[RMDB]
RNA sequence: GGGAACGACUCGAGUAGAGUCGAAAAGAGGGCCGGGUUGCUCUGGAGUAGAGGCUUCUUGCUUCGAAACAUCAUCGAUCGUCCCUUCUUCUUUUACCUUCUCCUGGCUCUUCCGAUGAGACGCGACCGGUGGCAUCACCUCUCGGUUCGUCUUCCACAACUAACAACACUUCGGUGUUGUUAGUUGAAAAGAAACAACAACAACAAC
Reactivity to DMS in 0.01 (KOAc 150mM, MgCl2 10mM, bicine 150mM(pH8.5), 24C), signal-to-noise 1, nucleotides 027 to 156: g000a080g070g040g050c020c040g010g000g010u000u000g030c050u010c070u000g060g040a270g060u000a120g010a080g000g000c020u000u000c160u010u020g020c030u000u000c030g000a300a130a180c010a090u000c040a130u000c030g000a060u010c050g000u000c000c010c000u010u010c040u000u000c030u000u000u010u000a070c030c000u000u000c020u020c020c040u010g020g030c040u010c030u000u000c020c020g020a210u000g000a140g000a020c000g020c060g020a090c010c040g010g020u000g000g010c070a190u000c070a110c000c010u000c020u010c030g010g000u010u000c010g010u000c020u010u010c040c070a260
Reactivity to 2A3 in 0.01 (KOAc 150mM, MgCl2 10mM, bicine 150mM(pH8.5), 24C), signal-to-noise 5, nucleotides 027 to 156: g040a010g010g010g020c030c010g060g020g000u040u030g010c010u010c000u010g010g000a000g000u010a010g010a010g000g010c020u140u090c100u250u300g010c000u000u000c020g020a030a000a020c010a030u300c000a020u030c020g150a210u070c010g020u040c000c000c000u050u050c020u010u020c010u020u080u050u060a070c010c000u050u060c030u030c020c020u020g040g000c010u010c010u100u020c030c030g170a200u190g030a040g010a020c030g010c130g050a010c010c010g000g000u010g010g010c050a150u120c050a100c040c000u010c030u090c030g000g000u010u010c000g000u010c000u020u010c000c010a060